[RMDB]
RNA sequence: GGGAACGACUCGAGUAGAGUCGAAAAGGAAGGAACUGAAUAUAAUUCUCUGACCCCCAUCCUGGGCACAGAGAAACAAAACUACUUGGAAGAAGCAAGCUGAAUUCAUAACAGCACAAGACUCCUUCUGCAGUUCAGCAAAUCGUGUGUGGUGUAAAGGGUAAAUAAUAUUCGUAUUAUUUACCCUAAAAGAAACAACAACAACAAC
Reactivity to 2A3 in 0.01 (KOAc 150mM, MgCl2 10mM, bicine 150mM(pH8.5), 24C), signal-to-noise 3, nucleotides 027 to 156: g010g020a050a000g000g000a020a050c080u060g050a160a010u130a040u070a210a140u090u000c010u000c000u000g120a150c020c020c020c000c000a050u080c020c050u090g010g000g000c110a040c020a200g020a000g000a000a020a000c020a010a070a010a010c050u120a010c070u090u130g050g000a040a010g010a030a000g040c050a070a010g010c000u020g040a110a110u070u100c090a040u130a240a070c000a000g020c040a030c060a090a090g040a260c010u000c010c000u010u050c000u030g000c020a010g000u040u050c020a020g030c070a050a030a130u140c130g030u020g010u010g010u030g050g120u050g060u070a130a120
Reactivity to DMS in 0.01 (KOAc 150mM, MgCl2 10mM, bicine 150mM(pH8.5), 24C), signal-to-noise 1, nucleotides 027 to 156: g000g020a070a160g030g010a140a050c090u010g050a080a040u000a200u010a090a110u000u000c000u020c010u010g020a130c010c000c000c080c080a150u000c130c060u040g020g010g010c050a090c020a010g020a070g000a010a040a160c020a030a040a130a070c030u000a060c130u010u000g030g000a060a100g000a060a060g020c020a020a100g000c000u010g000a120a140u020u000c160a140u010a130a210c000a110g000c000a060c040a080a090g000a130c030u010c000c000u000u010c010u000g000c040a080g020u010u000c010a020g090c090a080a070a070u010c030g080u010g040u000g010u010g000g000u020g000u000a040a130